[RMDB]
RNA sequence: GGGAACGACUCGAGUAGAGUCGAAAAGAACCGAGAACGGUAAGACGCGCUAUGGCAAAAGCUGCAAUAGAUCAUACGCCGCAAGUGGCAAGACGGAGAGCGCGCAAAGCGGUAUGGAAGAGAAGAAGCUACUCCUAGCUUUCGAGCUAGGAGUAGCAAAAGAAACAACAACAACAAC
Reactivity to DMS in 0.01 (KOAc 150mM, MgCl2 10mM, bicine 150mM(pH8.5), 24C), signal-to-noise 1, nucleotides 027 to 126: g000a150a010c010c040g040a300g040a020a110c050g040g070u020a030a270g000a080c000g040c060g030c000u000a060u060g030g000c120a130a090a020a080g000c090u030g000c080a050a060u000a170g000a030u040c000a000u030a040c060g010c040c040g000c110a170a070g000u000g000g000c050a030a000g030a010c080g040g000a260g000a090g000c060g040c040g000c050a040a130a130g040c000g000g060u000a070u000g000g010a080a110g000a030g050a000a180g010a100a070
Reactivity to 2A3 in 0.01 (KOAc 150mM, MgCl2 10mM, bicine 150mM(pH8.5), 24C), signal-to-noise 1, nucleotides 027 to 126: g080a040a000c030c010g010a010g010a110a090c080g030g000u080a090a000g030a000c000g010c000g000c040u020a010u110g010g000c010a120a030a000a090g010c030u020g000c000a000a180u100a040g030a000u080c010a040u000a060c040g000c030c000g080c000a020a000g030u050g080g020c070a090a030g080a000c030g040g000a080g000a000g000c060g000c010g000c000a010a020a020g040c000g000g000u130a100u080g070g000a120a010g060a010g020a150a000g030a030a020